[RMDB]
RNA sequence: GGGAACGACUCGAGUAGAGUCGAAAAAGUCCAUAUGCCCAUCUUUGCUGGGACGGAUGGAUGUUUAUACCCGCUAUGGAUGCCUAUUACUGAAAUGUAAUAGAUGCCUAAUACUCUCUCUCAGGGAGAGAGUUUAGAUGCCUCCAAAGUCCAUGCUCUAAAUGAUCGGGUUCGCCCGAUCAUUUAGAAAAGAAACAACAACAACAAC
Reactivity to 2A3 in 0.01 (KOAc 150mM, MgCl2 10mM, bicine 150mM(pH8.5), 24C), signal-to-noise 2, nucleotides 027 to 156: a000g020u020c020c020a030u060a040u050g070c000c000c000a080u070c130u210u290u300g170c090u030g030g000g150a140c000g020g010a000u000g000g010a000u030g070u020u270u010a080u070a010c000c010c030g010c060u150a050u060g000g010a000u060g000c010c000u000a000u000u010a010c010u030g100a030a100a080u210g000u000a010a000u000a020g060a040u080g000c000c000u040a050a020u250a090c000u050c000u000c000u010c020u020c140a140g140g300g000a000g000a000g000a000g000u000u000u000a010g000a010u130g010c000c020u120c070c070a150a040a000g000u020c030c010a020u050g000c020u000